[RMDB]
RNA sequence: GGGAACGACUCGAGUAGAGUCGAAAAGUUGAAGUGUUCGCACUUCAACAAACGCUCAAGUCAUGGAGCGCAAGACGAAUAGCUACAUAUUCGACAUGAGAAAAAGACUGUAGUUCGCUACAGUCAAGCUUUAAUUAGGGUUCGCCCUAAUUAAAGCAAAAGAAACAACAACAACAAC
Reactivity to 2A3 in 0.01 (KOAc 150mM, MgCl2 10mM, bicine 150mM(pH8.5), 24C), signal-to-noise 6, nucleotides 027 to 126: g000u000u010g010a000a000g010u020g020u050u140c180g040c060a000c000u000u000c000a000a000c000a000a020a000c010g000c000u010c020a040a160g150u040c010a040u050g040g000a000g010c030g000c160a110a030g090a030c010g010a030a010u020a020g050c100u230a110c100a210u050a040u010u030c010g010a010c020a030u070g010a050g120a070a110a020a020a020g000a000c000u000g000u000a000g010u020u050c230g010c090u010a010c000a000g000u000c000a000a000
Reactivity to DMS in 0.01 (KOAc 150mM, MgCl2 10mM, bicine 150mM(pH8.5), 24C), signal-to-noise 5, nucleotides 027 to 126: g010u000u000g010a010a000g020u010g020u000u010c250g030c000a020c000u000u000c000a010a010c000a060a110a190c030g010c000u010c000a090a120g010u000c040a030u000g010g000a020g020c000g020c120a070a080g020a040c010g020a010a010u000a020g010c150u000a130c160a110u000a010u000u000c010g020a090c020a020u000g010a050g010a060a080a080a130a130g010a010c010u000g010u000a000g010u010u010c240g020c010u000a000c000a000g000u000c000a010a050